[RMDB]
RNA sequence: GGGAACGACUCGAGUAGAGUCGAAAAUGGAGGCAUUGUUGAACUACCCUUCCUGGCAUUCACUAAACCCUCCAACCAGGUAAAAGCCUAUUUAAGAUGAAAUCAGUGAAUGAGGCCAGUUAUUAAGUGAUAGGGGGACAUUCGUGUCCCCCUAUCAAAAAGAAACAACAACAACAAC
Reactivity to DMS in 0.01 (KOAc 150mM, MgCl2 10mM, bicine 150mM(pH8.5), 24C), signal-to-noise 1, nucleotides 027 to 126: u020g040g000a060g020g020c220a050u010u000g010u000u010g000a160a040c120u000a000c070c020c030u000u020c100c020u000g000g000c040a050u000u000c000a020c020u000a010a080a210c140c010c000u000c030c020a090a110c270c030a020g000g010u000a110a080a050a180g050c030c020u000a090u000u000u010a110a140g010a230u000g040a050a010a190u010c140a020g020u000g000a010a010u000g000a070g010g010c010c010a090g000u000u000a110u000u000a060a140g000